RNA sequence: GGGAACGACUCGAGUAGAGUCGAAAAGAUAUGGAGAUUAUAUGGAGCGAGAUAUCGGAAACGAUAUGUCGCUAUGAAGUAUGUCUCCUAAGUCAAAACAUCUAGGAAAGUUCGCUUUCCUAGAUGACGUGUGACUAGAGUUCGCUCUAGUCACACGAAAAGAAACAACAACAACAAC
Reactivity to DMS in 0.01 (KOAc 150mM, MgCl2 10mM, bicine 150mM(pH8.5), 24C), signal-to-noise 2, nucleotides 027 to 126: g010a030u010a050u030g000g020a000g010a020u000u020a020u000a030u000g000g000a010g030c000g050a010g000a000u000a020u000c000g050g000a040a010a040c000g000a030u010a000u010g010u010c010g000c000u000a080u010g010a210a300g000u000a020u010g000u000c000u000c000c000u000a010a090g000u000c010a120a110a120a300c010a000u000c000u000a000g000g000a000a000a020g020u020u030c300g020c020u000u020u000c000c000u000a000g000a010u000g000a030
Reactivity to 2A3 in 0.01 (KOAc 150mM, MgCl2 10mM, bicine 150mM(pH8.5), 24C), signal-to-noise 2, nucleotides 027 to 126: g010a010u010a000u030g040g010a000g000a000u180u080a050u300a010u160g040g030a030g030c010g000a030g000a030u010a000u000c010g020g000a030a020a000c020g010a000u000a000u030g300u120c000g010c000u040a200u040g000a000a000g030u030a010u070g020u050c000u000c010c000u000a020a000g000u010c000a030a080a080a110c000a000u000c010u010a000g010g020a010a000a000g030u120u140c300g080c220u000u010u000c000c000u000a000g000a000u000g000a050
The record gives the reactivity of an RNA of 177 nucleotides to DMS and 2A3. Source: RMDB library TTRDES, as collected in RNAgym. DMS (dimethyl sulfate) methylates the pairing face of unpaired adenines and cytosines. The 2A3 profile rests on 3,531 reads.